Chemical mapping of a 177-nucleotide RNA with DMS and 2A3.
Conditions: 150 mM KOAc, 10 mM MgCl2 and 150 mM bicine (pH 8.5), 24 C.
For DMS, 1,290 sequencing reads were counted.
For 2A3 the reverse transcriptase was SuperScript II with manganese.
The 2A3 profile rests on 1,061 reads.
Reactivities are rounded to 0.1 and cut off at 0 and 3.
[RMDB]
RNA sequence: GGGAACGACUCGAGUAGAGUCGAAAAGACGCCUGUGUGGCGAAGCGAGCAUGAGAUGGAGCCGCAAGAGAAGAUGAGAUAGAAGCGGCUUGAUAGCUUGCUCGCGAAAAGAUCCAUCUCACAGAGAGCCGUAUUAUCGGUUCGCCGAUAAUACGGCAAAAGAAACAACAACAACAAC
Reactivity to DMS in 0.01 (KOAc 150mM, MgCl2 10mM, bicine 150mM(pH8.5), 24C), signal-to-noise 1, nucleotides 027 to 126: g000a070c060g000c000c000u000g000u030g000u000g000g000c020g010a150a300g000c010g010a010g000c000a000u000g010a020g030a000u000g000g000a030g000c010c000g080c000a120a150g020a150g080a100a050g000a300u020g020a030g020a150u060a110g030a240a180g000c030g000g000c000u000u000g000a000u000a030g020c000u000u000g000c010u000c000g000c000g010a120a060a010a100g000a050u080c000c000a200u060c060u010c090a060c070a130g020a090g000a270
Reactivity to 2A3 in 0.01 (KOAc 150mM, MgCl2 10mM, bicine 150mM(pH8.5), 24C), signal-to-noise 2, nucleotides 027 to 126: g040a000c010g080c000c000u080g120u020g080u160g090g000c000g000a010a000g000c000g040a000g000c030a030u040g000a010g000a090u080g130g000a000g000c060c060g060c040a120a090g090a000g080a160a130g120a090u190g070a060g140a300u210a060g060a220a030g000c010g000g000c000u000u000g050a030u020a000g020c000u000u010g000c000u000c000g000c000g020a000a000a000a030g030a040u090c000c000a150u000c000u040c020a110c070a040g060a000g000a010